[RMDB]
RNA sequence: GGGAACGACUCGAGUAGAGUCGAAAAAAGUCCCGCUUCUAGUUCAUUUUUCAAAUCUUCUAUUCAAAAUUUUGCUCAGAAUUUGAAUAGGAGAUUUGAGAAUUGAACUAGAAGCGGGACUUUCGCACUCUAUGAACCUGUUCGCAGGUUCAUAGAGAAAAGAAACAACAACAACAAC
Reactivity to 2A3 in 0.01 (KOAc 150mM, MgCl2 10mM, bicine 150mM(pH8.5), 24C), signal-to-noise 2, nucleotides 027 to 126: a000a000g000u000c010c010c000g010c010u010u000c000u000a000g010u000u000c000a010u010u010u000u000u000c000a000a000a010u000c010u000u000c000u020a010u000u000c010a030a080a180a230u020u080u060u140g090c090u090c150a070g030a090a040u000u000u000g000a000a000u000a000g020g000a000g000a000u000u000u000g000a000g010a000a010u000u000g000a000a000c000u000a000g000a000a000g000c000g000g000g000a000c000u000u000u000c010g000c010a010
Overview:
The data come from the RNA Mapping Database (RMDB), library RFM100. This 177-nucleotide RNA was probed chemically with 2A3. The RNA was probed in 150 mM KOAc, 10 mM MgCl2 and 150 mM bicine (pH 8.5) at 24 C. 2A3 adducts were read by reverse transcription with SuperScript II with manganese.